[RMDB]
RNA sequence: GGGAACGACUCGAGUAGAGUCGAAAAUGGGGUGUUUGGCAGGACAUGACUUCUGAGGCUGACUUGGAAGACGCCAUGCGUACCUCGCUGUCCUGGGACAGUCGCUCUUGGAACCCAGCUGCCGUGCGAAUCACCUUGGUUUCGACCAAGGUGAUUCAAAAGAAACAACAACAACAAC
Reactivity to DMS in 0.01 (KOAc 150mM, MgCl2 10mM, bicine 150mM(pH8.5), 24C), signal-to-noise 3, nucleotides 027 to 126: u010g010g000g020g000u010g020u000u010u000g000g020c040a080g020g000a060c080a060u010g010a140c040u000u000c030u000g000a020g010g030c260u010g010a180c020u020u010g000g000a020a030g000a140c120g010c080c050a050u000g000c010g050u010a070c070c050u000c040g010c060u000g010u000c010c010u000g000g010g010a080c050a040g000u000c060g000c050u020c020u000u010g010g010a100a150c030c010c010a090g000c020u010g010c000c020g010u000g010c230
Reactivity to 2A3 in 0.01 (KOAc 150mM, MgCl2 10mM, bicine 150mM(pH8.5), 24C), signal-to-noise 1, nucleotides 027 to 126: u070g010g010g030g000u050g010u040u090u060g100g010c030a040g050g000a030c010a120u110g040a060c030u020u000c030u040g030a040g030g040c090u140g100a150c010u020u010g010g010a050a000g080a050c050g030c040c010a040u080g000c000g030u040a070c010c040u010c000g000c020u010g000u030c010c020u050g060g040g020a030c010a010g030u050c030g060c070u010c030u000u080g070g010a060a030c020c000c000a020g000c040u060g010c010c050g050u070g040c050
This 177-nucleotide RNA was probed chemically with DMS and 2A3. The data come from the RNA Mapping Database (RMDB), library OK2TST. The RNA was probed in 150 mM KOAc, 10 mM MgCl2 and 150 mM bicine (pH 8.5) at 24 C. 2A3 adducts were read by reverse transcription with SuperScript II with manganese.